Conditions: 150 mM KOAc, 10 mM MgCl2 and 150 mM bicine (pH 8.5), 24 C. An RNA of 177 nucleotides, treated with DMS and 2A3 and read out base by base. Values cover nucleotides 27 to 126. The DMS profile rests on 2,283 reads. DMS adducts were read by reverse transcription with MarathonRT. Source: RMDB library OK1LIB, as collected in RNAgym.
[RMDB]
RNA sequence: GGGAACGACUCGAGUAGAGUCGAAAAUAUGCCAGUGGCCGGCUGAAAUCUGCUUAAAGUUUCACUCAUUAAGUCCUUGAACAAUGAAAGUGCUCUCGAGGACUCGUUGCGUCUCGAGAAGGCGGAACACCAUACGCGUGUUCGCACGCGUAUGGUGAAAAGAAACAACAACAACAAC
Reactivity to DMS in 0.01 (KOAc 150mM, MgCl2 10mM, bicine 150mM(pH8.5), 24C), signal-to-noise 2, nucleotides 027 to 126: u030a040u020g000c060c010a000g000u010g030g040c020c010g000g000c020u030g010a050a050a030u000c050u010g040c010u010u000a090a060a080g000u010u050u000c030a060c040u000c070a090u020u020a090a090g000u000c000c030u020u000g010a150a080c080a070a040u000g000a060a110a020g000u030g010c050u000c000u050c000g010a010g020g040a010c100u000c200g000u010u000g000c150g000u000c000u020c040g020a050g010a100a120g000g040c020g000g010a050a140
Reactivity to 2A3 in 0.01 (KOAc 150mM, MgCl2 10mM, bicine 150mM(pH8.5), 24C), signal-to-noise 2, nucleotides 027 to 126: u170a050u020g020c030c000a010g020u000g010g000c010c020g010g000c000u000g060a040a060a160u100c030u070g090c000u100u180a150a000a000g040u000u070u060c070a100c070u010c060a120u100u230a080a000g030u030c000c090u000u020g010a160a110c050a040a200u140g170a300a020a030g080u040g000c060u000c000u000c020g000a000g000g000a000c040u010c010g080u060u050g000c000g050u040c010u010c000g030a080g040a010a010g050g090c050g000g010a120a000